[RMDB]
RNA sequence: GGGAACGACUCGAGUAGAGUCGAAAAACGGCUGGCUACGGCCAGCCGAAUCGGGCCAAAGGCAGUCGCCCGACGACACAGGCGAUCGUUCGCCCUAGCGCUGCACACGACUAUACGUAGUCGUGAAUUGAUCACGCAACCUUCGGGUUGCGUGAAAGCAAAUAGAACAGUUCGCUGUUCUAUUUGCAAAAGAAACAACAACAACAAC
Reactivity to 2A3 in 0.01 (KOAc 150mM, MgCl2 10mM, bicine 150mM(pH8.5), 24C), signal-to-noise 1, nucleotides 027 to 156: a000c020g040g000c000u000g000g020c010u020a070c300g060g000c000c000a000g050c010c000g000a000a000u030c000g000g020g000c020c020a190a080a040g110g000c060a050g060u090c040g000c010c000c000g000a000c000g010a000c000a010c030a090g240g000c040g010a060u030c030g050u020u020c100g300c020c000c000u070a070g020c070g000c080u110g000c000a000c000a000c020g000a000c000u010a000u040a110c300g200u060a000g000u020c000g000u000g020a000a010u090u090g040a070u000c000a010c000g000c000a000a000c010c000u020u020c110g070g000g000u000u000g000c020g010u000g000a000a000a000